Description
This 177-nucleotide RNA was probed chemically with 2A3 and DMS. Conditions: 150 mM KOAc, 10 mM MgCl2 and 150 mM bicine (pH 8.5), 24 C.
RNA sequence: GGGAACGACUCGAGUAGAGUCGAAAAGUUGGUAGUUGCUAUUGGGGCGUGAGAUUCCCAAUCGACCCUUGGAACCAAUAGUUCCAACCAAAAGGCAAAGCUUCUGUCACUAAGCAAAAUUGAAACCUAGCUUCUUACUAUUCGUAGUAAGAAGCUAAAAAGAAACAACAACAACAAC
Reactivity to 2A3 in 0.01 (KOAc 150mM, MgCl2 10mM, bicine 150mM(pH8.5), 24C), signal-to-noise 4, nucleotides 027 to 126: g070u060u060g000g020u010a010g010u020u030g000c010u060a290u230u030g000g010g010g000c080g030u030g030a120g010a040u050u030c020c010c000a010a020u050c050g140a180c000c000c020u000u020g000g000a020a010c020c020a090a040u060a140g000u000u020c000c010a010a000c030c010a050a210a120a160g030g000c030a040a020a000g000c000u020u020c000u020g030u000c010a010c050u060a090a030g070c040a060a080a170a200u100u190g090a180a060a020c020c050
Reactivity to DMS in 0.01 (KOAc 150mM, MgCl2 10mM, bicine 150mM(pH8.5), 24C), signal-to-noise 5, nucleotides 027 to 126: g040u010u010g020g010u000a030g020u000u000g020c010u000a140u000u000g000g010g000g030c070g020u010g010a100g000a180u010u000c020c000c000a150a160u000c040g010a120c020c010c030u000u000g020g000a030a030c000c130a090a170u010a200g000u000u000c010c010a010a030c060c040a080a050a100a120g000g000c040a020a040a060g010c010u010u000c020u000g000u000c020a050c050u020a090a070g020c140a050a050a080a140u020u000g010a070a120a130c150c130
For 2A3, 5,363 sequencing reads were counted. DMS adducts were read by reverse transcription with MarathonRT. Values are in units of 0.01, from 0 to 300, in steps of 10. For 2A3 the reverse transcriptase was SuperScript II with manganese. It was measured as part of the RMDB library OK2TST. The DMS profile rests on 4,484 reads.